[RMDB]
RNA sequence: GGGAACGACUCGAGUAGAGUCGAAAAGAGGAGUGCCAGGUGAGCUGUGUCUCCAGCCCAGAGAUGGGUUUGGUUUGUCUCAUGGAAGGGUCCCUGGAGUUGACCAAGGUCGACUGCACCAUUUUACAAAAACAGUGCAGUUCGCUGCACUGUUUUUAAAAGAAACAACAACAACAAC
Reactivity to DMS in 0.01 (KOAc 150mM, MgCl2 10mM, bicine 150mM(pH8.5), 24C), signal-to-noise 2, nucleotides 027 to 126: g010a070g010g010a100g010u010g020c040c040a050g010g010u000g010a090g020c040u020g010u010g000u000c050u000c000c030a060g020c000c000c010a030g030a260g000a150u000g010g000g000u010u000u000g010g010u010u020u000g010u010c050u000c010a080u020g000g000a180a120g000g010g000u010c050c030c030u000g010g000a080g010u010u000g010a040c030c040a130a140g020g020u000c040g020a020c030u000g000c050a090c060c070a140u010u020u020u030a160c250